The record gives the reactivity of an RNA of 177 nucleotides to DMS and 2A3.
Values cover nucleotides 27 to 126.
For DMS the reverse transcriptase was MarathonRT.
For DMS, 2,657 sequencing reads were counted.
[RMDB]
RNA sequence: GGGAACGACUCGAGUAGAGUCGAAAAAUGACUUCGUGAUCCUGGGUGCGCAGGAUGCGGCCGUAGCCGAAGGGAUCAUCCAGCGUCGUGGUCAGCACCGUCACCGCAGCCGACACCGCGCGGUGGGGUAUGGUCCGAAUUUCGAUUCGGACCAUACAAAAGAAACAACAACAACAAC
Reactivity to DMS in 0.01 (KOAc 150mM, MgCl2 10mM, bicine 150mM(pH8.5), 24C), signal-to-noise 3, nucleotides 027 to 126: a070u010g010a040c020u010u010c080g020u010g000a070u000c130c010u010g030g000g020u000g020c050g020c110a140g030g000a060u010g010c040g010g000c040c210g040u010a190g020c010c030g020a100a110g010g010g000a060u000c040a030u000c040c010a070g000c090g020u010c040g010u010g020g000u000c040a070g000c130a140c030c020g020u000c020a020c010c020g000c000a120g030c020c020g000a130c160a080c180c110g000c020g000c010g000g020u000g000g000g000
Reactivity to 2A3 in 0.01 (KOAc 150mM, MgCl2 10mM, bicine 150mM(pH8.5), 24C), signal-to-noise 2, nucleotides 027 to 126: a000u060g050a010c040u070u040c060g090u040g050a050u010c020c000u020g020g000g010u190g020c040g030c060a040g070g110a080u090g090c020g060g050c010c030g120u110a040g000c000c010g050a050a050g090g020g000a030u040c000a010u020c000c000a000g010c010g080u080c050g000u050g010g000u040c010a000g090c060a040c020c010g080u050c010a010c010c000g010c060a080g030c030c010g080a130c060a060c080c030g000c010g010c030g050g010u030g000g020g020